[RMDB]
RNA sequence: GGGAACGACUCGAGUAGAGUCGAAAAACUAGUAUGUACACGAUGAGACUGCCGUGUCGUCUAGACUGCGGAUCCAAUCAUCUCAGAUCUGCGAGAUAUUGUCUCAAGAGUACGAGACAAGUACUCAGUCAAAUGACUACUUCGGUGGUCGUUUGACAAAAGAAACAACAACAACAAC
Reactivity to 2A3 in 0.01 (KOAc 150mM, MgCl2 10mM, bicine 150mM(pH8.5), 24C), signal-to-noise 9, nucleotides 027 to 126: a000c010u010a000g060u120a040u060g080u080a010c010a000c010g040a060u130g030a030g080a080c080u110g110c070c000g000u010g000u010c000g000u000c000u010a030g030a130c030u060g000c000g010g000a000u000c020c020a040a100u100c020a120u040c070u020c080a020g000a030u000c000u010g010c020g050a020g010a020u170a050u050u090g010u000c000u000c010a020a020g070a020g100u080a050c080g020a020g050a090c060a060a020g020u020a040c010u010c030a020
Reactivity to DMS in 0.01 (KOAc 150mM, MgCl2 10mM, bicine 150mM(pH8.5), 24C), signal-to-noise 9, nucleotides 027 to 126: a130c010u000a010g000u040a010u000g010u050a010c010a020c010g000a120u010g000a120g010a090c110u020g010c080c010g020u000g000u000c010g000u000c020u010a020g010a190c080u020g000c010g010g000a020u000c010c120a100a100u030c080a090u020c120u010c120a150g000a010u000c010u010g000c020g000a060g000a130u020a060u000u010g000u000c010u000c010a010a080g010a080g010u020a050c080g010a090g010a080c170a050a060g000u010a060c000u000c000a160